Structure probing data (2A3 and DMS) for a 177-nucleotide construct. The reactions ran in a buffer of 150 mM KOAc, 10 mM MgCl2 and 150 mM bicine (pH 8.5), at 24 C. Reactivities are given for positions 27 through 126. For 2A3 the reverse transcriptase was SuperScript II with manganese.

RNA sequence: GGGAACGACUCGAGUAGAGUCGAAAAUGUAUGCAACGAUGCCCAGCAGCCAUUCCAGUUGGGUGAUUUGUACCAUUAGGGCACUGCAUCUUACCUUACGGAACUUAAUUUUUUCUGCUAUAGUUCACCGUGCAGCAGAAUUCGUUCUGCUGCACGGAAAAGAAACAACAACAACAAC
Reactivity to 2A3 in 0.01 (KOAc 150mM, MgCl2 10mM, bicine 150mM(pH8.5), 24C), signal-to-noise 1, nucleotides 027 to 126: u060g060u070a000u030g040c000a000a030c040g110a140u020g000c000c000c000a010g060c000a020g010c030c030a070u250u120c030c030a110g160u030u100g040g030g100u040g050a110u130u030u080g030u020a130c050c070a150u100u170a040g000g060g020c000a010c030u020g000c000a040u000c000u000u020a020c000c020u020u060a060c030g020g020a010a010c000u050u120a040a190u190u170u030u030u030u000c040u060g120c020u080a050u060a130g030u080u000c030a030
Reactivity to DMS in 0.01 (KOAc 150mM, MgCl2 10mM, bicine 150mM(pH8.5), 24C), signal-to-noise 1, nucleotides 027 to 126: u010g000u010a040u000g020c030a010a200c210g020a020u000g020c060c000c010a190g000c010a030g030c180c130a060u010u000c020c050a240g040u000u040g000g000g000u000g000a140u010u000u000g020u000a120c100c070a210u000u000a060g000g000g020c130a060c060u000g040c020a040u000c010u010u000a110c040c020u010u000a050c180g000g000a060a000c130u000u000a070a040u000u000u000u000u000u000c080u030g010c110u000a040u000a010g010u010u000c030a230